[RMDB]
RNA sequence: GGGAACGACUCGAGUAGAGUCGAAAAGUGUCGGGGCUGGCUUAACUAUGCGGCAUCAGAGCAGAUUGUACUGAGAGUGCACCAUUCGACGCUCUCCCUUAUGCGACUCCUGCAUUAAGAAGCAGCCACCACGAGUACUGUUCGCAGUACUCGUGGUAAAAGAAACAACAACAACAAC
Reactivity to 2A3 in 0.01 (KOAc 150mM, MgCl2 10mM, bicine 150mM(pH8.5), 24C), signal-to-noise 2, nucleotides 027 to 126: g070u040g050u080c030g000g070g000g000c020u050g000g150c000u090u050a040a010c010u000a010u080g000c000g020g050c020a030u060c040a020g070a020g040c020a020g030a140u080u140g100u130a120c100u080g030a030g000a000g070u010g010c020a040c060c000a210u120u140c090g050a060c000g090c000u020c000u000c000c000c010u050u040a100u000g020c000g100a090c010u060c000c020u040g050c010a020u050u050a140a050g070a020a000g000c000a010g020c020c020
Reactivity to DMS in 0.01 (KOAc 150mM, MgCl2 10mM, bicine 150mM(pH8.5), 24C), signal-to-noise 3, nucleotides 027 to 126: g040u000g010u000c080g030g000g020g020c050u000g020g000c010u000u000a070a110c190u000a060u000g010c000g020g020c110a100u030c060a040g020a300g000c030a030g010a080u020u010g000u010a120c150u020g010a060g020a040g020u010g010c020a120c110c300a080u010u010c040g000a210c020g000c020u000c040u010c000c050c000u010u010a040u010g010c020g000a060c040u010c050c010u010g030c010a040u000u000a090a120g000a050a070g000c010a040g010c040c020